[RMDB]
RNA sequence: GGGAACGACUCGAGUAGAGUCGAAAAGAUAUGGAUCCAGCUACCCACCAUGUCGGAGCGUUGAUCCGAAUUAGUUCGGAAACGAACUAAUUCGGGGAGCUCGCGACAUGAGGCUGGAUCCUAAGUCGUAUAAUAGCGGGUUCGCCCGCUAUUAUACAAAAGAAACAACAACAACAAC
Reactivity to 2A3 in 0.01 (KOAc 150mM, MgCl2 10mM, bicine 150mM(pH8.5), 24C), signal-to-noise 2, nucleotides 027 to 126: g090a020u300a260u300g010g010a000u040c000c000a010g020c010u200a300c000c000c020a030c000c000a030u020g010u010c010g010g010a000g010c020g220u300u020g000a010u010c000c020g000a000a000u020u010a000g010u000u020c000g040g070a060a110a110c010g020a000a010c000u010a010a010u000u010c000g000g010g000g030a000g020c020u030c040g230c010g020a010c020a010u010g000a010g020g000c000u010g030g010a000u030c000c000u000a020a030g090u090c070
Reactivity to DMS in 0.01 (KOAc 150mM, MgCl2 10mM, bicine 150mM(pH8.5), 24C), signal-to-noise 2, nucleotides 027 to 126: g040a150u000a170u000g000g020a020u000c000c000a030g020c010u000a090c010c010c030a300c090c000a030u000g000u000c000g020g000a010g010c000g020u010u010g000a020u010c010c000g000a010a000u000u000a010g000u000u000c010g030g000a100a070a210c000g000a000a010c000u000a010a000u000u000c000g000g000g000g050a020g000c000u000c010g060c010g010a020c000a000u000g000a070g000g040c000u010g010g000a010u000c000c000u000a000a070g000u010c160